Background: Source: RMDB library M2PK90, as collected in RNAgym. This 177-nucleotide RNA was probed chemically with DMS and 2A3. The reactions ran in a buffer of 150 mM KOAc, 10 mM MgCl2 and 150 mM bicine (pH 8.5), at 24 C. 2A3 adducts were read by reverse transcription with SuperScript II with manganese. Reactivities are given for positions 27 through 126. For DMS, 2,263 sequencing reads were counted.
[RMDB]
RNA sequence: GGGAACGACUCGAGUAGAGUCGAAAAGAAGAGCCGGGCUAACAAAGGUGGGAGGCACCCAACCCUUCGCUAGAGCCGAGUGGGAAGGCUAAGCGAAACCAAGACAAAAUGGUUAUAAAUAAUGCAAGGGUAUACAUCAAUUCGUUGAUGUAUACCCAAAAGAAACAACAACAACAAC
Reactivity to DMS in 0.01 (KOAc 150mM, MgCl2 10mM, bicine 150mM(pH8.5), 24C), signal-to-noise 3, nucleotides 027 to 126: g010a070a100g010a110g030c050c030g000g000g020c060u010a070a100c140a080a090a090g000g020u000g010g000g010a080g000g010c080a080c020c010c030a100a150c030c020c030u010u000c040g000c030u000a110g000a070g020c010c010g010a130g010u010g020g000g010a070a110g010g000c020u000a050a060g000c010g010a030a020a040c030c000a030a040g000a100c260a050a040a090a050u010g000g000u000u000a120u010a040a040a110u000a050a060u000g010c130a110a130
Reactivity to 2A3 in 0.01 (KOAc 150mM, MgCl2 10mM, bicine 150mM(pH8.5), 24C), signal-to-noise 2, nucleotides 027 to 126: g020a030a000g000a010g030c020c050g010g030g000c040u040a120a030c050a190a060a020g040g010u050g030g020g010a050g040g000c010a030c000c020c000a040a090c020c000c000u040u030c030g000c010u030a040g020a000g180c000c000g000a000g070u200g060g060g020a060a060g000g000c010u020a030a010g000c000g010a020a000a000c010c000a050a030g180a130c110a030a100a020a100u050g000g000u030u030a090u080a120a150a010u150a050a050u090g060c090a110a080